[RMDB]
RNA sequence: GGGAACGACUCGAGUAGAGUCGAAAAUGUAAAGUACACAAGCGGGUGAGUGUGACCACCCCCUUGAAGCUGCCACCACAGCCAGGACGGUGCCCGGUCCCACACAGCUGCCAGCACUCGCUGCGGCACUUCAGCAAACUUUCGAGUUUGCUGAAGUAAAAGAAACAACAACAACAAC
Reactivity to DMS in 0.01 (KOAc 150mM, MgCl2 10mM, bicine 150mM(pH8.5), 24C), signal-to-noise 4, nucleotides 027 to 126: u020g020u000a070a070a090g020u000a080c090a210c040a020a050g010c300g000g000g020u000g010a130g010u010g010u010g010a100c060c020a050c020c000c010c050c030u020u010g000a060a090g030c070u010g000c020c010a090c060c060a070c050a030g010c030c030a040g000g000a070c060g020g000u000g010c040c030c040g000g010u000c010c000c030a100c130a100c140a100g000c050u000g010c100c040a070g010c020a100c150u000c230g000c050u000g000c040g000g020c040
Reactivity to 2A3 in 0.01 (KOAc 150mM, MgCl2 10mM, bicine 150mM(pH8.5), 24C), signal-to-noise 2, nucleotides 027 to 126: u120g020u060a000a120a080g100u170a050c060a020c030a080a030g010c030g020g030g020u030g050a110g030u150g030u090g120a020c020c010a000c020c000c000c010c000u020u050g010a040a030g010c010u030g060c000c020a060c000c020a040c040a060g040c000c000a010g040g010a040c020g060g030u050g030c000c040c000g000g010u000c000c000c020a020c000a000c010a020g030c000u020g050c080c000a010g000c010a040c060u120c130g000c010u010g050c010g020g020c020